[RMDB]
RNA sequence: GGGAACGACUCGAGUAGAGUCGAAAAGAUAUGGAUCCCGGGGAGGCUUUGAUCUCUGCUCGGAAACGAGCAGAGGGGAGCCUCAAGGGAUCCUAAGUCAAAAGCCCUUCCGUUCGCGGAAGGGCAACCUAUAGGCUAACUUCGGUUAGCCUAUAGGAAAAGAAACAACAACAACAAC
Reactivity to DMS in 0.01 (KOAc 150mM, MgCl2 10mM, bicine 150mM(pH8.5), 24C), signal-to-noise 1, nucleotides 027 to 126: g010a010u000a080u000g000g000a000u000c000c000c010g000g010g030g030a010g020g020c000u010u000u010g000a020u000c000u000c000u000g000c010u000c000g000g000a010a010a060c000g000a020g020c000a000g000a020g010g000g020g010a030g010c000c000u010c010a020a050g000g000g000a000u000c000c000u000a000a050g000u000c010a070a100a130a190g000c000c000c010u010u000c000c010g020u000u010c220g010c010g020g000a030a010g020g000g010c010a000a010
Reactivity to 2A3 in 0.01 (KOAc 150mM, MgCl2 10mM, bicine 150mM(pH8.5), 24C), signal-to-noise 2, nucleotides 027 to 126: g000a010u020a000u040g010g000a010u010c050c080c130g040g050g080g010a020g010g030c060u300u300u040g010a010u010c000u040c010u030g010c010u020c010g010g000a010a020a000c020g000a010g040c040a000g030a000g000g010g040g070a000g000c000c000u000c000a000a010g000g000g000a000u020c000c000u000a000a010g000u000c000a050a020a100a090g000c000c000c000u000u010c010c000g010u040u070c300g000c000g170g010a000a000g000g000g020c000a000a000